An RNA of 177 nucleotides, treated with DMS and 2A3 and read out base by base. For 2A3 the reverse transcriptase was SuperScript II with manganese. Reactivities are given for positions 27 through 126.
RNA sequence: GGGAACGACUCGAGUAGAGUCGAAAACACUAAGCAUAUAGUAGGCAUUCCAGAACUGUCAAGUGAAUGAACGAUAAAAGCUAUAUGUAUUGCCACUUGGCUUUAAAAAGGAGUGGAGGAACAAUUAAUAGGUGGAUCUAUUCGUAGAUCCACCUAUAAAAGAAACAACAACAACAAC
Reactivity to DMS in 0.01 (KOAc 150mM, MgCl2 10mM, bicine 150mM(pH8.5), 24C), signal-to-noise 2, nucleotides 027 to 126: c140a110c090u030a130a180g000c020a000u000a000u000a010g020u000a090g000g000c020a020u000u010c010c070a190g010a110a180c160u000g020u000c070a140a140g030u020g000a040a020u000g000a040a090c030g010a120u010a060a070a070a060g000c010u000a020u000a010u000g010u000a070u000u000g000c000c010a060c010u000u010g000g000c020u000u030u030a030a080a140a180a070g000g010a020g010u000g010g010a160g010g000a060a080c130a030a080u000u010a080
Reactivity to 2A3 in 0.01 (KOAc 150mM, MgCl2 10mM, bicine 150mM(pH8.5), 24C), signal-to-noise 1, nucleotides 027 to 126: c040a000c090u160a130a100g020c020a000u010a000u000a180g190u040a010g160g000c010a000u070u000c010c010a060g080a170a140c260u160g140u300c120a180a000g050u070g130a000a040u060g050a080a090c060g060a070u170a200a130a000a000g000c000u010a010u010a000u110g060u040a050u020u190g030c020c000a000c010u030u100g240g000c000u090u090u020a100a080a000a000a000g030g000a060g040u060g010g010a000g090g100a130a050c060a200a060u220u300a050